RNA sequence: GGGAACGACUCGAGUAGAGUCGAAAAAAUAUACUCGACGAUGUACGGCGCUGUCGAGAAAGCCGCACUCUACGCAGCCGAGCGUCUAGCCGAGACAGGCUUCGAGGUGCACAUAUACGGCUCCAACUAGUAAUGGGUGGUUCGCCACCCAUUACUAAAAAGAAACAACAACAACAAC
Reactivity to DMS in 0.01 (KOAc 150mM, MgCl2 10mM, bicine 150mM(pH8.5), 24C), signal-to-noise 2, nucleotides 027 to 126: a030a060u020a070u040a080c010u000c000g010a040c020g040a170u040g000u040a040c110g010g000c050g030c140u000g000u000c030g000a010g010a080a030a110g020c050c040g020c030a000c040u000c040u000a010c020g000c050a060g020c060c000g000a250g030c100g090u020c000u030a100g000c210c090g010a170g000a120c070a150g000g010c020u000u000c060g020a040g010g000u000g020c010a030c140a130u040a060u010a090c150g000g050c070u000c000c020a090a030c120
Reactivity to 2A3 in 0.01 (KOAc 150mM, MgCl2 10mM, bicine 150mM(pH8.5), 24C), signal-to-noise 3, nucleotides 027 to 126: a000a000u250a000u050a040c020u010c020g020a020c010g060a110u080g010u220a110c070g020g070c020g000c030u040g000u000c010g000a000g050a070a060a000g020c000c010g010c020a010c030u160c040u100a060c010g030c080a000g020c000c000g040a090g100c100g020u000c010u010a050g060c060c050g070a040g030a010c050a020g000g000c000u020u010c010g020a010g010g020u020g020c050a030c000a050u240a010u020a040c030g030g000c000u010c020c000a100a060c060
This 177-nucleotide RNA was probed chemically with DMS and 2A3. It was measured as part of the RMDB library OK1LIB. For DMS the reverse transcriptase was MarathonRT.